The record gives the reactivity of an RNA of 207 nucleotides to DMS and 2A3.
The data come from the RNA Mapping Database (RMDB), library OK3TST.
The reactions ran in a buffer of 150 mM KOAc, 10 mM MgCl2 and 150 mM bicine (pH 8.5), at 24 C.
For 2A3 the reverse transcriptase was SuperScript II with manganese.
The 2A3 profile rests on 1,073 reads.
RNA sequence: GGGAACGACUCGAGUAGAGUCGAAAAGAAAUACAAAUAUCACUGGGCAGCUUGAAGCAGUUGGGAGCCUCCAAUGAGAGCAACUUGAGAGAAUGAUGUUGCAAGUUAGUAGGAGUAAGAAAUGCUGUGUUCUCCCUGUCUUCUCUUAGGUCACAUGUGAAUCAAAAGUUUUCGAACUUUUGAUUCAAAAAGAAACAACAACAACAAC
Reactivity to DMS in 0.01 (KOAc 150mM, MgCl2 10mM, bicine 150mM(pH8.5), 24C), signal-to-noise 2, nucleotides 027 to 156: g000a090a090a120u000a220c040a080a090a150u010a060u000c030a060c070u000g030g000g030c000a070g000c040u000u000g010a110a150g020c000a120g000u000u020g020g000g000a140g040c040c000u000c020c020a090a140u000g010a140g050a130g020c020a020a050c040u000u000g010a120g000a090g010a090a110u000g000a070u000g020u000u000g000c010a060a110g020u010u000a100g020u000a080g030g010a080g040u000a050a140g010a080a070a100u000g000c010u000g010u010g020u000u000c050u000c020c000c020u030g020u000c040u000u000c010u000c020u000u000a070g020g030u000c030a030c090a120u010g020
Reactivity to 2A3 in 0.01 (KOAc 150mM, MgCl2 10mM, bicine 150mM(pH8.5), 24C), signal-to-noise 2, nucleotides 027 to 156: g030a010a100a000u210a020c040a000a100a000u090a040u100c030a030c040u020g000g030g000c010a020g000c030u080u100g060a070a010g000c010a020g000u060u060g030g020g030a020g010c020c010u050c030c070a020a060u110g030a050g000a000g080c010a010a010c010u040u040g020a030g020a010g060a110a080u160g030a040u120g030u090u020g000c060a050a030g050u090u110a040g010u060a050g010g020a020g040u050a080a030g060a100a070a030u110g030c040u050g020u010g030u110u010c050u010c030c000c000u010g040u000c000u060u040c030u010c000u090u060a050g020g020u100c090a040c050a120u260g000